[RMDB]
An RNA of 207 nucleotides, treated with 2A3 and DMS and read out base by base. The reactions ran in a buffer of 150 mM KOAc, 10 mM MgCl2 and 150 mM bicine (pH 8.5), at 24 C. Reactivities are given for positions 27 through 156. Source: RMDB library OK3TST, as collected in RNAgym. 2A3 adducts were read by reverse transcription with SuperScript II with manganese. The 2A3 profile rests on 4,653 reads.
RNA sequence: GGGAACGACUCGAGUAGAGUCGAAAACUCAAUCACUACGGUGAUUGAGAAUGCUUACGCCUCAAUAAAGCUUGAGUAGAGUGCCUCGAGCAGAUAUAGACUGAAACAUUUAGUAUGGUCAAGCAGGGAGCAACAGCUCGAGUACGCUCGAGCUGAACCUAGGUAAAUGAUUCGUCAUUUACCUAGGAAAAGAAACAACAACAACAAC
Reactivity to 2A3 in 0.01 (KOAc 150mM, MgCl2 10mM, bicine 150mM(pH8.5), 24C), signal-to-noise 5, nucleotides 027 to 156: c000u000c000a000a000u000c000a000c010u060a020c210g130g000u000g000a000u000u000g000a000g010a030a040u100g010c000u020u030a050c080g060c010c010u080c070a050a160u110a130a100a030g000c000u030u030g020a010g010u080a050g070a070g070u080g060c000c000u000c030g000a010g010c020a000g090a020u190a010u060a050g050a020c040u070g050a080a140a040c050a030u120u150u080a070g030u050a040u150g000g000u040c010a020a010g010c030a030g090g000g040a040g010c020a030a080c010a020g000c000u000c010g000a000g000u010a020c240g020c020u000c000g000a000g000c000u000g010a030a030
Reactivity to DMS in 0.01 (KOAc 150mM, MgCl2 10mM, bicine 150mM(pH8.5), 24C), signal-to-noise 2, nucleotides 027 to 156: c020u010c000a020a020u000c000a010c000u000a150c300g130g020u010g000a010u000u000g010a030g000a090a060u000g040c000u000u000a030c070g040c020c000u000c050a150a090u000a060a190a150g020c010u000u010g040a070g040u000a090g000a140g030u020g020c120c000u010c030g010a040g050c040a040g010a130u000a150u000a130g000a080c020u000g020a200a110a070c030a070u000u000u000a090g000u010a100u000g000g000u010c040a060a120g010c030a100g020g010g000a030g010c030a070a090c000a110g030c030u000c000g010a040g010u000a070c170g000c000u000c000g000a020g010c000u010g000a020a090